[RMDB]
RNA sequence: GGGAACGACUCGAGUAGAGUCGAAAACUUCAGUAUCGCACGGUUGCCCCCGUGAGAGAAGGCUGCGGCGGAUUGCCCUAUUAGCUUAAUCUGUGUGUUGGUUGCGCGUUGAGAGUAUCACCAUCGGCUAAAUAUAUUUUUUCGAAAAUAUAUUUAGAAAAGAAACAACAACAACAAC
Reactivity to 2A3 in 0.01 (KOAc 150mM, MgCl2 10mM, bicine 150mM(pH8.5), 24C), signal-to-noise 2, nucleotides 027 to 126: c010u110u100c050a050g030u060a060u190c080g020c020a030c030g070g020u190u100g110c010c010c010c010c000g040u050g010a070g000a020g010a050a020g040g010c020u060g020c030g040g000c020g070g030a140u010u110g030c010c000c000u020a070u100u150a020g000c030u000u070a050a060u000c010u050g050u000g010u000g000u040u040g050g020u030u030g000c000g000c010g010u040u000g030a070g000a000g020u050a040u070c000a000c040c000a060u050c000g010g040
Reactivity to DMS in 0.01 (KOAc 150mM, MgCl2 10mM, bicine 150mM(pH8.5), 24C), signal-to-noise 4, nucleotides 027 to 126: c040u010u020c050a060g020u020a070u020c040g000c030a050c000g020g010u030u030g020c050c040c040c010c000g020u020g010a060g010a080g000a090a100g000g000c030u010g020c100g020g000c050g010g020a070u020u030g000c010c010c040u000a060u020u020a060g000c040u020u020a050a100u010c030u000g020u000g000u000g000u010u000g000g010u010u010g010c040g000c060g000u000u010g000a090g010a060g000u010a060u010c040a070c020c020a050u020c050g010g010
Source information: The data come from the RNA Mapping Database (RMDB), library OK1LIB. The record gives the reactivity of an RNA of 177 nucleotides to 2A3 and DMS. The reactions ran in a buffer of 150 mM KOAc, 10 mM MgCl2 and 150 mM bicine (pH 8.5), at 24 C. 2A3 adducts were read by reverse transcription with SuperScript II with manganese. For DMS, 11,421 sequencing reads were counted. Reactivities are given for positions 27 through 126.